Chemical mapping of a 207-nucleotide RNA with DMS and 2A3. It was measured as part of the RMDB library VIROID. For 2A3 the reverse transcriptase was SuperScript II with manganese. DMS adducts were read by reverse transcription with MarathonRT.
[RMDB]
RNA sequence: GGGAACGACUCGAGUAGAGUCGAAAAAAGAGUUGUAUCCACCGGGUAGUUUCCAACUCCGUCUGGUUUGAAGAAGGAGCCGUUCCACGCAGGACGCGAACAAGAAGAAGCCGACGCAACGUCAGGGCGCCGCGCACGAACGGGCGCUCGCGCGCCGCAUUAGAUAUCUGUUCGCAGAUAUCUAAUGAAAAGAAACAACAACAACAAC
Reactivity to DMS in 0.01 (KOAc 150mM, MgCl2 10mM, bicine 150mM(pH8.5), 24C), signal-to-noise 2, nucleotides 027 to 156: a110a080g000a150g000u000u000g020u010a110u000c010c020a100c070c020g040g030g030u000a040g020u010u020u000c020c010a080a070c010u000c040c000g020u000c060u000g030g090u000u000u000g000a050a090g000a100a090g010g010a090g040c020c010g030u010u000c030c030a070c110g040c050a140g020g020a170c050g010c050g040a060a100c050a100a110g000a100a080g000a130a120g070c030c020g030a080c030g020c050a050a100c040g000u000c010a100g020g010g020c000g030c030c020g020c010g030c040a070c120g020a100a060c060g000g020g000c030g070c000u000c040g000c140g020c000g070c010c020g010
Reactivity to 2A3 in 0.01 (KOAc 150mM, MgCl2 10mM, bicine 150mM(pH8.5), 24C), signal-to-noise 2, nucleotides 027 to 156: a020a020g080a010g030u080u090g020u100a160u080c040c030a030c020c100g020g030g010u040a040g010u060u050u030c030c020a010a020c040u030c020c030g090u040c060u080g080g090u150u110u170g190a140a100g020a040a030g060g000a000g030c020c030g010u080u000c040c010a120c080g020c060a060g050g010a030c080g010c060g030a050a040c020a070a030g130a060a000g010a010a000g030c040c020g000a010c000g010c070a140a060c050g020u070c070a020g000g040g000c020g010c020c000g050c020g050c000a050c080g080a210a040c070g040g030g000c010g000c030u050c030g020c010g010c030g040c000c040g000